Chemical mapping of a 170-nucleotide RNA with DMS and 2A3.
For DMS, 99,336 sequencing reads were counted.
DMS adducts were read by reverse transcription with MarathonRT.
The reactions ran in a buffer of 150 mM KOAc, 10 mM MgCl2 and 150 mM bicine (pH 8.5), at 24 C.
2A3 adducts were read by reverse transcription with SuperScript II with manganese.
RNA sequence: GGGAACGACUCGAGUAGAGUCGAAAAUGAAGUCUCCCGCGCGGGUCCUCUUCCUAGGUCCGGAAUCAACCUCCAUCCGAUCUGUCCGGAGCUUUUUCGGCGGAGGAGCUCCCUCCCCGUCCUUCCCUGGCUUUUACCUUCGGGUAAAAGAAAAGAAACAACAACAACAAC
Reactivity to DMS in 0.01 (KOAc 150mM, MgCl2 10mM, bicine 150mM(pH8.5), 24C), signal-to-noise 9, nucleotides 027 to 129: u060g030a070a070g010u000c050u000c030c040c040g030c130g000c060g000g010g020u030c000c000u000c040u000u000c010c010u020a080g000g010u010c000c000g000g000a030a020u010c140a090a100c000c000u040c040c040a110u030c050c020g000a090u040c070u040g000u030c000c040g010g030a020g010c090u050u020u010u020u000c050g010g020c180g000g000a040g000g010a080g010c050u020c020c010c000u010c010c000c000c010g000u010c020c010u020u040c020c010c010u030g010g010
Reactivity to 2A3 in 0.01 (KOAc 150mM, MgCl2 10mM, bicine 150mM(pH8.5), 24C), signal-to-noise 9, nucleotides 027 to 129: u170g050a070a020g050u010c030u010c040c010c010g030c020g010c020g020g020g020u040c010c010u020c010u040u030c010c010u020a040g010g060u020c020c020g010g030a020a070u120c050a050a090c020c020u030c030c010a130u050c030c030g040a060u030c030u110g110u040c020c020g040g000a040g020c010u100u090u020u040u100c020g020g010c030g030g010a040g010g000a010g020c030u070c010c000c000u020c010c000c000c000g030u030c000c010u020u040c010c000c000u020g100g010